[RMDB]
RNA sequence: GGGAACGACUCGAGUAGAGUCGAAAAUGUUCGAUUAUAUUGUGCGGAAGGAGCGGCUCGAAGAGUCUGAAGCUCGUCAUUUCUUCCGGCAGCUCGUCAGUGCGAUCGCUUUCGUUCAUUCACAAGACAUCAUGCACCAUUUCGAUGGUGCAUGAUGAAAAGAAACAACAACAACAAC
Reactivity to 2A3 in 0.01 (KOAc 150mM, MgCl2 10mM, bicine 150mM(pH8.5), 24C), signal-to-noise 3, nucleotides 027 to 126: u060g000u030u030c010g010a010u040u080a120u070a030u170u090g020u030g100c030g040g030a020a030g070g010a040g010c010g020g000c020u010c040g100a080a060g050a020g140u030c050u080g040a030a000g060c080u070c120g120u010c090a070u030u100u020c000u010u020c000c000g000g000c010a000g020c010u000c000g040u010c030a020g010u010g070c030g040a030u070c050g000c140u030u040u040c000g070u020u030c030a050u050u070c070a060c010a170a000g100a020
Reactivity to DMS in 0.01 (KOAc 150mM, MgCl2 10mM, bicine 150mM(pH8.5), 24C), signal-to-noise 3, nucleotides 027 to 126: u010g000u000u000c030g020a070u000u010a090u000a060u000u010g040u000g010c000g000g010a030a050g010g020a030g020c040g010g000c020u010c300g000a060a060g000a030g010u010c070u010g000a080a220g010c100u020c130g010u010c030a070u000u000u000c020u010u000c030c090g020g010c020a040g010c020u000c010g000u000c030a050g010u000g010c020g010a030u000c130g010c120u000u010u000c020g020u000u010c020a080u010u010c080a050c110a120a080g010a210